Source information: Source: RMDB library M2RFPK, as collected in RNAgym. The record gives the reactivity of an RNA of 207 nucleotides to 2A3 and DMS. In probing experiments dimethyl sulfate is read out at A N1 and C N3, which are open when not base-paired. 2A3 adducts were read by reverse transcription with SuperScript II with manganese. DMS adducts were read by reverse transcription with MarathonRT.
RNA sequence: GGGAACGACUCGAGUAGAGUCGAAAAAGAUCCACGCUACGGCGUGGAUCACACGUUCAUCCCUAUUGGGACGGAAUUAGGCAUAGUGCCGAAGGAACGCAUUAGUCAUGCGCUACGGCGCAUGACACACAUCAGAGUCACUUCGGUGACUCUGAAACAGAUUCCUUAGGUUCGCCUAAGGAAUCUGAAAAGAAACAACAACAACAAC
Reactivity to 2A3 in 0.01 (KOAc 150mM, MgCl2 10mM, bicine 150mM(pH8.5), 24C), signal-to-noise 4, nucleotides 027 to 156: a000g000a000u020c000c010a010c000g000c000u040a050c300g140g000c000g000u000g000g010a010u000c000a000c000a000c000g010u020u000c010a020u050c000c000c000u100a290u190u300g000g000g010a010c030g020g080a060a080u120u040a090g000g000c040a070u060a250g090u120g140c000c000g000a020a020g080g030a040a030c030g020c100a100u060u110a020g020u000c000a000u010g000c000g000c010u010a050c300g110g000c000g000c000a000u000g000a000c000a000c000a010c000a080u030c000a000g000a000g010u000c000a010c010u030u120c170g060g000u000g000a000c000u010c000u000g000a000a010a000
Reactivity to DMS in 0.01 (KOAc 150mM, MgCl2 10mM, bicine 150mM(pH8.5), 24C), signal-to-noise 2, nucleotides 027 to 156: a090g020a020u000c000c000a020c000g040c000u000a120c300g100g000c010g060u000g080g000a020u000c000a010c050a010c140g020u000u000c020a170u000c010c000c000u000a180u010u000g000g000g000a050c060g010g000a050a080u000u000a100g020g010c050a140u000a100g040u000g040c000c000g000a060a070g010g000a070a080c080g000c060a150u000u010a070g000u020c090a030u000g030c000g000c000u000a120c280g070g020c030g000c000a000u000g010a030c000a050c090a070c100a100u010c010a010g010a010g020u000c000a010c010u010u000c300g020g020u000g010a010c000u000c000u000g020a010a090a160